[RMDB]
RNA sequence: GGGAACGACUCGAGUAGAGUCGAAAAGCGUUCGGGCUGGGAGCGUGCUUUCCACGACGGUGACACGCUUCCCUGGAUUGGCAGCCAGACUGCCUUCCGGGUCACUGCCAUGGAGGAGCCGCAGUCACUCACGAUUACCUUUCGAGGUAAUCGUGAGAAAAGAAACAACAACAACAAC
Reactivity to 2A3 in 0.01 (KOAc 150mM, MgCl2 10mM, bicine 150mM(pH8.5), 24C), signal-to-noise 4, nucleotides 027 to 126: g040c040g040u050u040c030g010g030g010c050u070g040g030g010a050g040c040g010u140g020c060u020u040u040c020c010a050c060g250a020c070g010g020u000g010a000c010a030c140g050c010u110u090c010c000c010u020g010g010a100u080u190g020g000c000a000g000c040c020a080g080a300c010u010g010c000c000u000u020c010c000g020g010g020u010c010a010c060u020g000c010c020a040u070g020g020a050g020g030a020g010c000c010g010c010a020g040u050c020a010
Reactivity to DMS in 0.01 (KOAc 150mM, MgCl2 10mM, bicine 150mM(pH8.5), 24C), signal-to-noise 2, nucleotides 027 to 126: g000c010g030u010u030c040g000g020g020c060u000g000g010g000a100g000c020g000u010g030c030u000u040u000c000c000a080c110g000a110c100g000g000u030g000a050c020a040c010g030c090u000u030c030c020c030u010g000g000a020u090u020g000g000c000a000g010c030c220a210g040a230c020u000g000c000c000u000u030c000c000g000g000g020u000c100a040c010u030g000c060c000a150u010g000g000a050g000g000a060g020c030c010g000c000a150g000u000c110a230

Source: RMDB library OK1LIB, as collected in RNAgym. Chemical mapping of a 177-nucleotide RNA with 2A3 and DMS. For DMS the reverse transcriptase was MarathonRT. Reactivities are rounded to 0.1 and cut off at 0 and 3. Reactivities are given for positions 27 through 126. 2A3 adducts were read by reverse transcription with SuperScript II with manganese. The RNA was probed in 150 mM KOAc, 10 mM MgCl2 and 150 mM bicine (pH 8.5) at 24 C.